About this RNA
Structure probing data (DMS and 2A3) for a 177-nucleotide construct. DMS adducts were read by reverse transcription with MarathonRT. The RNA was probed in 150 mM KOAc, 10 mM MgCl2 and 150 mM bicine (pH 8.5) at 24 C.
RNA sequence: GGGAACGACUCGAGUAGAGUCGAAAAUGACCUCGUGGUCUCCAAUUAUCUUUCCUUUGAAGCAACCAAUAUCCUUUAUAGAUGACUCCGAACUUUCUGUGCUGAUGUCUCGGAUACACUCCGAUAAUAUUAAUCCUACGUUCGCGUAGGAUUAAUAAAAAGAAACAACAACAACAAC
Reactivity to DMS in 0.01 (KOAc 150mM, MgCl2 10mM, bicine 150mM(pH8.5), 24C), signal-to-noise 5, nucleotides 027 to 126: u000g000a110c030c010u010c180g030u000g010g000u010c020u000c030c030a080a110u010u000a080u000c040u000u010u000c040c020u010u010u010g000a120a100g010c050a100a090c060c020a070a080u010a090u000c030c030u000u000u010a090u010a120g000a090u000g010a080c060u010c030c040g000a050a090c060u000u000u000c060u010g020u000g020c050u010g000a070u000g000u000c100u000c020g000g010a080u000a100c180a110c110u000c010c020g010a070u010a060a120
Reactivity to 2A3 in 0.01 (KOAc 150mM, MgCl2 10mM, bicine 150mM(pH8.5), 24C), signal-to-noise 2, nucleotides 027 to 126: u040g010a000c010c010u050c060g110u130g000g060u030c010u000c030c000a050a110u130u050a040u040c010u050u080u010c010c020u070u080u190g090a050a020g010c000a000a040c010c000a020a080u030a080u160c000c000u140u140u100a220u070a060g050a070u070g060a040c020u000c040c030g020a040a050c070u050u070u070c030u060g110u030g030c020u040g020a090u080g070u010c040u000c040g030g000a050u040a040c070a000c050u020c010c010g040a020u120a180a030